[RMDB]
The record gives the reactivity of an RNA of 177 nucleotides to DMS and 2A3.
RNA sequence: GGGAACGACUCGAGUAGAGUCGAAAACUAGGUCUGGCAUAUGGAGGGCAGGCAGGUCUCCUGAAGGGAUACUGACUGUUCAUUUAUGGUCAAUGGAAGGAGACUACUAAGGUCCCCCCCAAGGCAAGUUUAUGUCCAUAUUCGUAUGGACAUAAACAAAAGAAACAACAACAACAAC
Reactivity to DMS in 0.01 (KOAc 150mM, MgCl2 10mM, bicine 150mM(pH8.5), 24C), signal-to-noise 7, nucleotides 027 to 126: c050u000a070g010g020u000c030u000g000g010c050a090u010a090u010g010g000a080g000g000g010c030a050g010g010c040a060g010g020u000c010u000c000c020u010g010a230a180g010g000g000a090u000a100c090u000g010a030c010u000g000u000u000c300a110u000u010u000a020u000g000g010u000c020a030a100u010g000g010a140a060g010g010a060g010a020c010u010a070c120u010a080a090g010g010u000c000c000c000c000c010c010c010a100a070g000g000c200a070a130
Reactivity to 2A3 in 0.01 (KOAc 150mM, MgCl2 10mM, bicine 150mM(pH8.5), 24C), signal-to-noise 5, nucleotides 027 to 126: c020u040a040g090g000u010c020u040g060g000c040a070u090a100u240g100g030a100g040g030g000c030a010g000g020c040a050g010g020u000c010u020c010c010u040g060a090a060g090g050g010a040u090a260c030u020g020a010c000u010g040u050u030c030a110u090u140u110a060u080g000g000u020c010a070a070u060g050g020a030a030g020g020a020g020a010c010u020a030c030u060a140a050g070g030u050c000c000c000c000c000c000c000a020a010g070g020c060a070a050
The reactions ran in a buffer of 150 mM KOAc, 10 mM MgCl2 and 150 mM bicine (pH 8.5), at 24 C. For DMS, 10,347 sequencing reads were counted.